The record gives the reactivity of an RNA of 177 nucleotides to 2A3 and DMS. The RNA was probed in 150 mM KOAc, 10 mM MgCl2 and 150 mM bicine (pH 8.5) at 24 C. Reactivities are rounded to 0.1 and cut off at 0 and 3. It was measured as part of the RMDB library OK2TST. For 2A3, 3,728 sequencing reads were counted.

RNA sequence: GGGAACGACUCGAGUAGAGUCGAAAAUACGUGGACCGUGGAUAGAGUGCAUCUGCUCUUCGUAAACAUCAGCGCUGGCAUCGUACUUAUCACCAUCGUUGACGAAUUCUGCUGGCAAUGGGAACACCAGUAUUACCACCUUCGGGUGGUAAUACUGAAAAGAAACAACAACAACAAC
Reactivity to 2A3 in 0.01 (KOAc 150mM, MgCl2 10mM, bicine 150mM(pH8.5), 24C), signal-to-noise 3, nucleotides 027 to 126: u100a010c010g000u020g030g040a070c060c050g030u040g030g000a060u040a120g100a030g090u070g030c020a100u020c030u090g000c010u000c020u040u070c020g020u060a050a110a030c010a080u070c020a020g020c020g000c060u020g040g000c020a040u090c050g040u040a080c050u130u150a110u200c060a040c070c040a060u110c040g050u020u070g050a040c010g030a050a080u150u020c020u080g040c000u020g020g000c020a040a090u060g020g040g000a050a020c020a010c090
Reactivity to DMS in 0.01 (KOAc 150mM, MgCl2 10mM, bicine 150mM(pH8.5), 24C), signal-to-noise 5, nucleotides 027 to 126: u000a040c080g030u000g000g020a040c120c080g050u010g000g010a070u000a050g010a090g020u000g000c100a100u010c050u000g020c050u000c030u000u000c050g010u010a040a100a130c140a060u000c030a030g000c270g000c050u000g010g010c060a070u000c100g010u000a060c100u000u000a070u020c110a080c040c050a040u000c090g010u010u010g000a070c070g010a060a100u000u000c080u000g010c020u000g010g000c050a060a100u000g010g000g020a090a080c110a070c130